This 177-nucleotide RNA was probed chemically with 2A3 and DMS. For DMS the reverse transcriptase was MarathonRT. The reactions ran in a buffer of 150 mM KOAc, 10 mM MgCl2 and 150 mM bicine (pH 8.5), at 24 C. The 2A3 profile rests on 4,793 reads. In probing experiments dimethyl sulfate is read out at A N1 and C N3, which are open when not base-paired.
RNA sequence: GGGAACGACUCGAGUAGAGUCGAAAAACCGCAUCCGCAACCCGCUGGCCCGCACCGCCCGGCGUGCGAUCGCGGCCCGCACCGAAGCUUCGGACCCGACCACCCGGACCUUGCGUUUGGCCCGGGUAUUCCUACAUGCUUUCGAGCAUGUAGGAAUAAAAGAAACAACAACAACAAC
Reactivity to 2A3 in 0.01 (KOAc 150mM, MgCl2 10mM, bicine 150mM(pH8.5), 24C), signal-to-noise 5, nucleotides 027 to 126: a000c030c000g000c040a080u070c050c060g050c100a070a080c020c000c000g010c070u060g040g010c020c000c010g020c030a030c020c010g010c010c000c010g010g010c060g030u050g010c040g070a090u070c050g000c050g020g010c000c010c010g000c000a040c020c040g080a080a030g020c020u040u050c020g050g030a060c030c020c010g010a030c030c000a020c000c000c000g010g020a020c020c020u040u070g090c060g140u090u100u110g000g020c000c000c000g000g010g000u010
Reactivity to DMS in 0.01 (KOAc 150mM, MgCl2 10mM, bicine 150mM(pH8.5), 24C), signal-to-noise 2, nucleotides 027 to 126: a150c030c020g000c090a090u010c130c000g030c060a110a100c090c040c000g060c060u000g010g030c020c010c040g010c060a090c020c100g000c050c050c020g020g000c070g030u020g040c070g000a010u020c110g000c030g010g040c010c020c030g070c120a050c010c030g020a160a090g000c120u010u020c040g010g030a100c000c010c010g000a060c110c040a020c000c040c010g000g000a060c010c000u000u050g020c090g010u010u000u020g000g020c010c010c000g000g000g000u000